[RMDB]
RNA sequence: GGGAACGACUCGAGUAGAGUCGAAAAACAUAGGUGGCCGCCUUACGAGGAGGCCACCUAUGAAACACUCUCUAUCAGAAUGAAUUCUUGCUGUAAUAACAGAUAGAGUAGGUUGUUACAGACUAAAAUACGUGUGCAUUCUUCGGAAUGCACACAACAUCAUAGUCUGCUUCGGCAGACUAUGAUGAAAAGAAACAACAACAACAAC
Reactivity to 2A3 in 0.01 (KOAc 150mM, MgCl2 10mM, bicine 150mM(pH8.5), 24C), signal-to-noise 1, nucleotides 027 to 156: a000c000a000u000a000g000g000u000g010g010c000c000g020c000c000u040u020a070c140g040a030g020g000a010g000g000c040c010a010c000c000u020a000u000g000a000a000a000c010a010c000u000c000u020c000u010a020u090c050a020g110a300a140u080g050a040a090u230u040c110u110u230g090c000u020g010u000a010a020u040a030a040c020a010g020a140u050a030g010a000g070u040a050g000g040u000u000g000u000u020a020c020a100g100a120c150u130a000a030a050a110u240a150c190g020u000g000u000g020c020a030u000u020c000u030u000c090g000g000a000a000u000g000c050a000c010a000c000a000a000